[RMDB]
RNA sequence: GGGAACGACUCGAGUAGAGUCGAAAACGUGGAACUGUCAGAGGAGGCAGGAGACACAAUCCCACCUCUCAAUGUGCAAAUGUGGCAUUUCGAAUUUGCAAUAGGAUGAGUAAAUUUAUUUUCUCUGAGACUUUAAUGAGACCAUGUGCUACAAGUACGCUUAGCGAGAGUUCGCUCUCGCUAAGCGAAAAGAAACAACAACAACAAC
Reactivity to 2A3 in 0.01 (KOAc 150mM, MgCl2 10mM, bicine 150mM(pH8.5), 24C), signal-to-noise 1, nucleotides 027 to 156: c070g010u000g000g000a050a010c000u000g000u090c090a060g040a070g260g030a170g030g080c010a010g000g000a030g040a000c010a000c000a000a100u000c000c000c000a000c000c000u060c000u030c030a100a100u300g030u000g010c040a090a020a050u040g030u120g030g000c050a100u000u260u300c130g040a050a100u010u010u070g000c000a000a070u010a070g070g000a050u090g000a010g000u090a000a050a050u100u170u090a130u020u120u060u020c000u000c000u060g060a070g060a060c020u040u080u160a190a090u250g050a000g000a010c020c060a070u060g060u040g070c000u030a000c000a010a010g020u080a000
Source: RMDB library OK3TST, as collected in RNAgym. An RNA of 207 nucleotides, treated with 2A3 and read out base by base. Reactivities are rounded to 0.1 and cut off at 0 and 3. The reactions ran in a buffer of 150 mM KOAc, 10 mM MgCl2 and 150 mM bicine (pH 8.5), at 24 C.